[RMDB]
Chemical mapping of a 170-nucleotide RNA with 2A3 and DMS.
For 2A3 the reverse transcriptase was SuperScript II with manganese.
For DMS the reverse transcriptase was MarathonRT.
RNA sequence: GGGAACGACUCGAGUAGAGUCGAAAACCUACAUUUACCACUCCGCAUUCAUUGAGUGUGGAAGUUGUGGUAAUGAUUCCUGGCUUACAGGGAAUGCUAUCCAAGGGUUUGCCUGUGGAUGUGGGGCGAGGACCGUACUUCGGUACGGUCAAAAGAAACAACAACAACAAC
Reactivity to 2A3 in 0.01 (KOAc 150mM, MgCl2 10mM, bicine 150mM(pH8.5), 24C), signal-to-noise 9, nucleotides 027 to 129: c000c010u000a020c010a040u090u090u030a010c000c000a010c010u010c000c000g010c010a000u010u020c030a090u140u300g030a010g000u020g000u010g010g030a060a080g170u250u230g010u020g020g000u010a010a010u010g040a010u050u060c010c000u030g070g000c060u170u130a070c050a050g020g000g050a010a080u120g030c050u110a050u060c030c020a020a080g060g020g030u070u120u140g140c010c010u070g000u050g100g020a070u030g040u050g030g030g010g020c030g030a060g100
Reactivity to DMS in 0.01 (KOAc 150mM, MgCl2 10mM, bicine 150mM(pH8.5), 24C), signal-to-noise 4, nucleotides 027 to 129: c020c010u040a140c110a000u000u000u000a030c020c010a010c000u000c000c000g000c020a000u020u000c020a210u040u090g000a000g050u020g040u000g000g030a100a070g050u050u040g030u030g020g040u000a010a010u000g010a170u010u010c050c020u030g030g030c070u040u040a090c030a060g000g010g030a050a050u080g040c090u030a070u000c040c040a100a100g000g000g000u020u050u050g040c050c000u030g050u000g000g020a060u020g020u040g010g010g010g020c020g070a110g000
For 2A3, 21,623 sequencing reads were counted.